This 207-nucleotide RNA was probed chemically with 2A3. For 2A3 the reverse transcriptase was SuperScript II with manganese. The reactions ran in a buffer of 150 mM KOAc, 10 mM MgCl2 and 150 mM bicine (pH 8.5), at 24 C. It was measured as part of the RMDB library ARCHII.
RNA sequence: GGGAACGACUCGAGUAGAGUCGAAAACCGUCAUCAACGGAACAGUUAAUAUAACUGCAAAGAACGAAAAUUCUUACGCUUUAGCUGCUUAAUAACCAGCUAGCGUGAUCCUUCCGACUUCGCUCAAGGGUCGGGUCUGGGUCUCAAAUUAUUGAGCGUGAGUCUUAUAGUUCGCUAUAAGACUCACAAAAGAAACAACAACAACAAC
Reactivity to 2A3 in 0.01 (KOAc 150mM, MgCl2 10mM, bicine 150mM(pH8.5), 24C), signal-to-noise 5, nucleotides 027 to 156: c010c000g090u110c070a220u050c020a040a120c010g030g070a020a050c010a010g010u020u050a250a100u180a250u080a250a040c030u050g020c050a130a080a060g040a060a030c110g110a060a080a050a110u190u120c060u090u080a030c000g000c010u150u100u090a000g000c000u010g010c010u050u050a050a020u050a070a030c010c000a000g000c000u010a010g010c000g000u020g000a010u000c000c000u030u000c000c000g000a000c000u030u010c060g000c000u000c010a000a000g000g000g000u000c000g010g000g080u100c140u040g020g000g040u010c010u000c060a100a150a060u250u190a080u020u070g000a000g000c010